[RMDB]
The record gives the reactivity of an RNA of 177 nucleotides to 2A3 and DMS. The 2A3 profile rests on 40,499 reads. Values are in units of 0.01, from 0 to 300, in steps of 10.
RNA sequence: GGGAACGACUCGAGUAGAGUCGAAAACAGGCGUGUCGGCUGCAAAGGAAGUUUGGGUGGACGAGCCGCCUUCCGCUCUCGGCACCGUAUCUCGAAUACUUUCUCGUUGCUGGGACCUUAGGCGCGGUCUUCUGAGCCGGUUCGCUGGUUCGGAAGAAAAAGAAACAACAACAACAAC
Reactivity to 2A3 in 0.01 (KOAc 150mM, MgCl2 10mM, bicine 150mM(pH8.5), 24C), signal-to-noise 9, nucleotides 027 to 126: c040a000g020g010c010g010u030g010u020c010g010g010c010u010g000c010a020a010a020g020g020a020a020g010u030u060u050g050g000g010u030g010g050a040c020g010a020g030c010c010g010c010c000u040u010c010c020g010c010u000c000u010c000g000g000c010a010c010c010g030u030a080u020c090u020c060g080a110a050u100a120c030u050u080u040c050u010c020g040u030u060g000c000u020g000g010g030a040c000c010u040u080a020g000g000c010g000c010g020g010
Reactivity to DMS in 0.01 (KOAc 150mM, MgCl2 10mM, bicine 150mM(pH8.5), 24C), signal-to-noise 9, nucleotides 027 to 126: c110a050g000g000c030g010u010g000u000c010g000g000c020u000g010c040a040a050a060g000g000a030a010g010u010u010u020g010g010g020u000g000g000a080c080g000a110g010c050c030g010c040c010u000u010c020c040g010c110u000c030u000c030g010g010c020a040c060c050g010u010a030u010c040u020c080g000a120a070u030a070c100u000u010u010c050u010c070g010u010u010g000c020u000g000g000g000a080c050c040u000u010a050g010g000c030g000c040g000g000